Chemical mapping of a 177-nucleotide RNA with 2A3 and DMS.
For 2A3 the reverse transcriptase was SuperScript II with manganese.
It was measured as part of the RMDB library OK2TRN.
For 2A3, 2,266 sequencing reads were counted.
[RMDB]
RNA sequence: GGGAACGACUCGAGUAGAGUCGAAAACGAUCCAGCGCUGCGAGGCCGAUCUGGCCAUGGCCGCAGCGGAUCACAUAUCUGUGAUAUGAUCCAGGCGCGUACCUCAUGCGCGGCCGGCCUGACUAGGCCUCCAUGGGGCAUUCGUGCCCCAUGGAGGAAAAGAAACAACAACAACAAC
Reactivity to 2A3 in 0.01 (KOAc 150mM, MgCl2 10mM, bicine 150mM(pH8.5), 24C), signal-to-noise 2, nucleotides 027 to 126: c070g010a020u050c020c050a060g130c080g000c080u050g000c030g040a090g060g020c020c010g040a260u050c140u200g010g000c020c020a080u070g020g010c040c010g000c000a020g000c000g000g010a000u020c020a020c020a070u140a050u030c120u170g220u190g140a030u030a030u090g050a050u010c030c010a050g030g020c020g000c000g030u060a080c000c030u150c060a080u170g020c030g010c000g040g000c000c010g000g000c000c000u060g020a100c050u090a060g010g070
Reactivity to DMS in 0.01 (KOAc 150mM, MgCl2 10mM, bicine 150mM(pH8.5), 24C), signal-to-noise 2, nucleotides 027 to 126: c100g000a100u000c040c090a160g010c130g000c070u000g000c120g000a070g020g020c020c000g020a100u010c140u020g010g020c020c010a070u000g000g010c060c020g020c060a060g060c040g030g010a030u000c030a080c130a080u000a060u010c050u020g000u030g000a040u000a080u000g010a070u000c010c030a180g010g010c030g000c070g000u010a080c100c090u000c180a120u010g010c020g000c010g000g000c000c010g000g010c010c020u010g010a070c020u020a130g040g000